[RMDB]
RNA sequence: GGGAACGACUCGAGUAGAGUCGAAAAAUCAACGGGUUUCUUCUUUCCGCUGAGGUAGGUCAUGAUGAAGUCCGCACUGCUGUUGAGUACUAUGACCAAAGCGACGAUGUAAUGGAUGUUGAGGACCUUCGCAGAGUAGAAAAGCUCCAUGGAUGACCCUUGUAAAGAUGUUCGCAUCUUUACAAGGAAAAGAAACAACAACAACAAC
Reactivity to 2A3 in 0.01 (KOAc 150mM, MgCl2 10mM, bicine 150mM(pH8.5), 24C), signal-to-noise 2, nucleotides 027 to 156: a000u090c030a000a060c040g000g000g050u020u000u030c000u070u000c000u010u070u050c030c050g000c090u070g040a040g070g070u080a060g000g020u040c030a020u110g090a040u070g030a060a000g060u020c040c000g020c010a060c040u120g020c010u090g030u180u050g020a040g030u040a050c050u070a100u170g060a050c000c000a090a050a020g080c040g080a080c030g040a080u110g020u150a060a070u140g070g030a020u050g020u080u060g020a010g000g040a000c000c010u020u000c050g010c080a020g020a040g080u070a020g070a030a100a010a030g000c030u000c040c000a060u100g000g050a040u050g050a040c010
Reactivity to DMS in 0.01 (KOAc 150mM, MgCl2 10mM, bicine 150mM(pH8.5), 24C), signal-to-noise 2, nucleotides 027 to 156: a080u020c000a060a060c060g030g000g000u000u000u010c040u000u010c040u000u000u010c040c020g050c070u020g000a080g060g030u000a050g010g000u000c030a070u000g010a110u000g010a090a160g010u050c020c030g040c040a080c050u020g020c030u000g020u010u000g010a040g050u000a100c090u000a110u000g010a090c000c020a040a120a140g020c010g020a070c040g020a130u000g030u010a110a130u000g010g000a030u020g000u000u000g020a190g010g000a040c020c030u000u000c170g020c060a070g000a090g030u000a080g010a040a090a060a160g010c050u000c000c000a090u000g070g010a120u000g010a090c090
Source information: Chemical mapping of a 207-nucleotide RNA with 2A3 and DMS. For DMS the reverse transcriptase was MarathonRT. Reactivities are rounded to 0.1 and cut off at 0 and 3. The data come from the RNA Mapping Database (RMDB), library OK3TST. The 2A3 profile rests on 1,237 reads. For 2A3 the reverse transcriptase was SuperScript II with manganese. Reactivities are given for positions 27 through 156.